[RMDB]
Source: RMDB libraries RFM100 and RFMREP, as collected in RNAgym.
This 177-nucleotide RNA was probed chemically with 2A3 and DMS.
RNA sequence: GGGAACGACUCGAGUAGAGUCGAAAAAUUCCGGUUGAUCCUGCCGGAGGUCAUUGCUAGUGGAGUCCGAUUUAGCCAUGCUAGUUGCACGAGUUUAGACUCGUAGCAGAUAGCUCAGUAACACGUGGGUCGUACCAUUAUUCGUAAUGGUACGACCAAAAGAAACAACAACAACAAC
Reactivity to 2A3 in 0.01 (KOAc 150mM, MgCl2 10mM, bicine 150mM(pH8.5), 24C), signal-to-noise 3, nucleotides 027 to 126: a000u050u000c000c000g000g020u080u080g050a160u080c000c000u040g020c000c020g000g010a000g010g010u070c060a030u010u100g040c030u010a010g020u030g050g040a030g070u020c020c000g050a050u020u000u130a040g000c040c030a040u130g000c000u000a000g030u090u010g000c000a000c020g000a030g020u100u130u150a170g090a090c000u000c000g000u010a070g000c000a000g010a070u010a000g000c000u030c070a070g060u110a100a040c040a010c120g070u150g070
Reactivity to DMS in 0.01 (KOAc 150mM, MgCl2 10mM, bicine 150mM(pH8.5), 24C), signal-to-noise 2, nucleotides 027 to 126: a150u040u000c020c010g000g000u010u010g000a100u000c050c040u000g000c000c010g000g010a020g000g000u010c060a140u020u000g010c070u000a010g010u000g010g010a120g020u000c040c040g000a110u000u000u010a100g000c030c070a100u000g020c020u000a030g000u010u000g030c000a030c020g000a040g010u000u050u020a150g010a030c010u000c000g020u000a080g040c010a000g000a050u000a010g000c010u040c270a100g000u030a060a050c130a070c200g020u030g010